[RMDB]
RNA sequence: GGGAACGACUCGAGUAGAGUCGAAAAUUCAAGGGGGCUGCCCCGGUCUGAUAGAAAACAUCGAUGGGAAUGCCGCCGCGCGGAUACCAAUAGCCUCCGAUCCGCAGCCAUUCCGGCUCCAGCAGGAAUAAUGCUAGGGGUUCGCCCCUAGCAUUAUAAAAGAAACAACAACAACAAC
Reactivity to DMS in 0.01 (KOAc 150mM, MgCl2 10mM, bicine 150mM(pH8.5), 24C), signal-to-noise 1, nucleotides 027 to 126: u010u010c050a060a070g020g010g010g030g000c000u000g030c260c000c000c050g040g010u000c080u010g030a090u010a090g010a090a040a090a190c130a040u000c040g010a030u000g000g010g040a150a120u000g020c110c040g000c010c080g000c140g000c020g030g000a030u010a090c090c070a050a090u000a050g000c030c010u000c030c030g010a050u000c010c000g000c010a090g000c010c070a050u000u000c070c040g050g000c020u000c090c050a070g000c090a030g000g020a100